[RMDB]
RNA sequence: GGGAACGACUCGAGUAGAGUCGAAAAUAAAACCAUCGAGCUCUAAUGAGUUCGAUGGAGCAUGAAAGUCUCCUGAGUAUGACAUCAUGCAAAUCAGGAGGUGUCGAGGAAAACUCGACGCCAAAAAGGCCAUUAGGACUUUCGAGUCCUAAUGGCCAAAAGAAACAACAACAACAAC
Reactivity to 2A3 in 0.01 (KOAc 150mM, MgCl2 10mM, bicine 150mM(pH8.5), 24C), signal-to-noise 2, nucleotides 027 to 126: u160a000a040a040a000c000c000a000u010c000g000a000g000c000u000c060u160a230a300u300g000a000g000u000u000c000g000a000u000g000g000a000g000c000a050u050g040a070a230a000g000u020c000u020c020c020u190g020a180g070u080a120u180g000a000c000a060u040c000a000u160g000c000a000a000a230u210c170a070g000g140a030g020g020u040g000u000c000g000a000g060g080a160a100a050a030c030u020c000g000a020c020g000c020c000a030a040a040a040a040

An RNA of 177 nucleotides, treated with 2A3 and read out base by base.
Values cover nucleotides 27 to 126.
The 2A3 profile rests on 668 reads.
Source: RMDB library OK1LIB, as collected in RNAgym.
Reactivities are rounded to 0.1 and cut off at 0 and 3.